[RMDB]
RNA sequence: GGGAACGACUCGAGUAGAGUCGAAAAGAUGCUCCGGAUGCAAGUGGGUCCUCGCUCUGCGGCGGCGUGCUUGGGCUGUGUAGGCGGUCGGUCCACCACGCUGACAAUGCCGCCCACGGCUUCGUCCCAUCAGUGAUCGGUUCGCCGAUCACUGAUGAAAAGAAACAACAACAACAAC
Reactivity to 2A3 in 0.01 (KOAc 150mM, MgCl2 10mM, bicine 150mM(pH8.5), 24C), signal-to-noise 5, nucleotides 027 to 126: g080a020u130g020c030u030c040c030g010g020a050u090g060c080a110a050g020u070g040g050g040u080c030c030u040c030g020c010u080c070u120g040c030g020g010c010g010g000c030g030u020g010c050u050u050g010g000g000c020u040g000u040g040u130a090g000g050c040g020g030u100c040g020g020u000c010c000a030c040c000a060c030g000c030u010g010a030c030a050a130u150g000c000c010g000c010c000c000a040c000g010g000c000u060u080c020g080u020c010c020
Reactivity to DMS in 0.01 (KOAc 150mM, MgCl2 10mM, bicine 150mM(pH8.5), 24C), signal-to-noise 3, nucleotides 027 to 126: g000a070u020g000c050u020c050c040g000g010a100u010g020c030a050a050g050u000g000g000g020u020c070c030u000c020g000c040u000c050u000g000c140g000g010c000g000g000c030g010u000g000c100u000u000g010g010g020c000u000g010u000g000u060a080g010g000c050g000g000u030c180g030g010u000c080c050a040c300c020a070c090g050c070u050g010a030c060a090a150u020g020c010c000g010c030c030c000a030c020g000g000c010u010u000c080g000u000c020c010